RNA sequence: GGGAACGACUCGAGUAGAGUCGAAAAACGAGUCGUCCGCGACUCGAAUGGUAUUGUCGGCGUAAAAGAACAAGACGUCACCGGACGCGACCGGGCUAAAAAGCGAAACGUCAUCUACGGAUGACGAAAAACGGACCUGGGUUCGCCCAGGUCCGAACUGAUGGACUAGGUUCGCCUAGUCCAUCAGAAAAGAAACAACAACAACAAC
Reactivity to 2A3 in 0.01 (KOAc 150mM, MgCl2 10mM, bicine 150mM(pH8.5), 24C), signal-to-noise 2, nucleotides 027 to 156: a000c020g000a000g000u000c000g060u040c030c140g070c020g050a020c000u000c020g010a030a080u120g050g050u170a120u060u270g140u120c030g010g000c030g030u090a070a080a070a120g130a090a110c070a070a040g160a030c020g020u010c010a010c010c000g010g000a030c000g000c000g000a030c020c020g000g000g070c050u060a010a000a000a000a000g020c040g050a090a030a000c010g010u000c000a020u000c000u030a070c190g070g000a000u000g010a010c010g050a060a000a020a000a000c000g000g000a000c010c000u000g020g000g090u060u070c080g080c000c000c000a000g010g000u010c000c000g000a000a000

Source: RMDB library M2RFPK, as collected in RNAgym. Chemical mapping of a 207-nucleotide RNA with 2A3. For 2A3, 956 sequencing reads were counted.